[RMDB]
The data come from the RNA Mapping Database (RMDB), library OK1LIB.
This 177-nucleotide RNA was probed chemically with 2A3 and DMS.
For 2A3 the reverse transcriptase was SuperScript II with manganese.
Reactivities are given for positions 27 through 126.
RNA sequence: GGGAACGACUCGAGUAGAGUCGAAAAGCAUUGCCACCACCUUGAUGUUCGUGGCUCUGAAGCACGCCAACCGCGAGGUGAAGCACAAGAUCAAAGCGGGGCGCGACAAGCUGCACCUGGAAAAGUGCCCCAUCAUAAUCUUCGGAUUAUGAUGGGGAAAAGAAACAACAACAACAAC
Reactivity to 2A3 in 0.01 (KOAc 150mM, MgCl2 10mM, bicine 150mM(pH8.5), 24C), signal-to-noise 6, nucleotides 027 to 126: g040c020a050u040u230g030c020c000a030c010c010a020c040c030u170u170g080a110u170g120u110u090c060g020u050g010g040c010u000c040u040g020a080a000g030c040a020c100g010c020c020a040a110c040c000g000c000g020a050g070g040u040g020a040a050g040c040a050c030a110a070g040a110u180c100a080a080a000g060c010g000g000g040g020c010g000c010g050a090c070a130a050g010c010u040g000c070a090c040c020u050g050g040a060a100a030a040g090u070g040
Reactivity to DMS in 0.01 (KOAc 150mM, MgCl2 10mM, bicine 150mM(pH8.5), 24C), signal-to-noise 4, nucleotides 027 to 126: g000c040a040u030u000g020c010c000a050c030c080a050c020c080u010u010g000a100u030g000u000u000c300g040u000g010g000c010u000c070u010g020a110a070g000c080a170c050g050c060c030a080a160c020c030g000c030g000a170g000g000u000g000a130a190g020c110a090c160a050a090g020a030u010c050a060a070a100g010c000g010g010g010g040c070g010c040g010a100c160a080a110g000c020u010g000c030a100c010c000u000g010g010a090a010a090a090g040u020g000

DMS adducts were read by reverse transcription with MarathonRT.